Annotation:
The record gives the reactivity of an RNA of 177 nucleotides to 2A3 and DMS. The reactions ran in a buffer of 150 mM KOAc, 10 mM MgCl2 and 150 mM bicine (pH 8.5), at 24 C. The DMS profile rests on 6,484 reads. DMS adducts were read by reverse transcription with MarathonRT. For 2A3 the reverse transcriptase was SuperScript II with manganese.
RNA sequence: GGGAACGACUCGAGUAGAGUCGAAAAGAUAUGGACCGCCCAUGGCGACGAUCUCGGAAACGAGGGAGCCAAUGGGUCGGUCCUAAGUCAAAAUCAAGAUGACGUGCUUCGGCACGUCAUCUUGAAAUCCUAUGUUGAAGUUCGCUUCAACAUAGGAAAAAGAAACAACAACAACAAC
Reactivity to 2A3 in 0.01 (KOAc 150mM, MgCl2 10mM, bicine 150mM(pH8.5), 24C), signal-to-noise 2, nucleotides 027 to 126: g010a000u060a020u140g010g000a000c010c010g000c010c000c000a000u000g000g020c030g060a300c000g020a040u000c010u000c000g040g020a100a070a050c020g020a010g030g000g000a000g000c010c000a030a110u010g000g000g040u120c050g000g010u000c000c000u010a000a000g000u010c010a030a000a000a240u040c010a010a010g000a000u000g010a010c000g000u010g000c020u100u200c300g030g000c000a000c000g020u000c000a000u010c000u000u000g000a000a000a000
Reactivity to DMS in 0.01 (KOAc 150mM, MgCl2 10mM, bicine 150mM(pH8.5), 24C), signal-to-noise 4, nucleotides 027 to 126: g000a040u000a300u010g010g010a010c000c000g010c020c000c000a020u000g010g010c010g030a060c210g000a030u000c000u000c000g000g000a120a100a190c010g010a020g010g010g010a070g020c000c000a020a040u000g000g000g010u010c010g020g000u000c000c000u000a010a060g000u000c030a070a090a080a120u000c000a010a000g000a010u000g010a010c000g010u000g000c010u000u010c230g030g030c000a010c000g010u000c000a000u010c000u000u000g000a020a060a100